[RMDB]
RNA sequence: GGGAACGACUCGAGUAGAGUCGAAAAAGGUAACUUUGCCGGACAGGAGCGUAAUGUGGCAGAUCUCGAUGAUGGUUACGCCAGACUAUCAAAUAUGCUGCUUGAGGCUUAUUCGGGCGCAGAUCUGGAUUAGCAUGCUCUUCGGAGCAUGCUAAUCAAAAGAAACAACAACAACAAC
Reactivity to DMS in 0.01 (KOAc 150mM, MgCl2 10mM, bicine 150mM(pH8.5), 24C), signal-to-noise 2, nucleotides 027 to 126: a080g000g010u010a110a070c040u000u020u000g030c020c010g000g000a080c210a050g010g000a040g020c060g000u010a110a110u010g020u000g010g020c030a040g010a090u000c040u000c100g000a130u000g000a030u000g020g020u000u000a090c200g010c050c050a050g010a010c030u000a010u000c010a000a040a050u010a050u010g030c030u000g010c070u000u000g010a100g010g000c060u010u010a060u000u000c030g000g010g010c060g000c180a030g020a120u000c040u020g000

Structure probing data (DMS) for a 177-nucleotide construct. The reactions ran in a buffer of 150 mM KOAc, 10 mM MgCl2 and 150 mM bicine (pH 8.5), at 24 C. It was measured as part of the RMDB library OK2TRN.